[RMDB]
RNA sequence: GGGAACGACUCGAGUAGAGUCGAAAACUAGUGAGAAGAUGGAUUCUCUUAUGACAAGGCUAGUGGUCUGAUAGAGAAAGGAAGCCUACUAGACAAUCCUUUCAGUUUUUUAAACUGUAAUUUACAGCAGAACAUAGCUAUUCGUAGCUAUGUUCUGAAAAGAAACAACAACAACAAC
Reactivity to 2A3 in 0.01 (KOAc 150mM, MgCl2 10mM, bicine 150mM(pH8.5), 24C), signal-to-noise 4, nucleotides 027 to 126: c010u010a020g020u060g120a090g010a120a040g050a100u220g070g050a080u080u010c010u010c000u030u060a080u050g030a020c030a050a070g110g080c040u140a060g190u070g150g000u000c010u010g030a060u100a150g060a000g030a040a060a020g040g040a090a030g000c010c000u010a040c010u010a010g010a060c040a030a090u020c010c000u000u040u030c010a010g000u020u010u000u010u050u160a080a070a020c000u010g030u020a050a220u080u140u140a100c070a050g030
Reactivity to DMS in 0.01 (KOAc 150mM, MgCl2 10mM, bicine 150mM(pH8.5), 24C), signal-to-noise 6, nucleotides 027 to 126: c010u000a030g010u010g010a070g010a040a060g020a180u010g020g010a160u000u000c010u000c010u000u000a150u000g010a050c090a060a090g000g010c060u000a080g020u010g000g010u010c000u000g010a190u010a060g000a060g000a030a030a050g010g020a160a200g010c040c010u000a030c050u000a020g000a080c070a100a120u000c000c010u000u010u000c020a030g010u000u000u000u010u010u010a040a040a080c000u000g010u010a040a090u010u010u010a070c170a080g000
Overview:
This 177-nucleotide RNA was probed chemically with 2A3 and DMS. The 2A3 profile rests on 3,530 reads. Reactivities are given for positions 27 through 126. The reactions ran in a buffer of 150 mM KOAc, 10 mM MgCl2 and 150 mM bicine (pH 8.5), at 24 C. DMS adducts were read by reverse transcription with MarathonRT. It was measured as part of the RMDB library OK2TRN.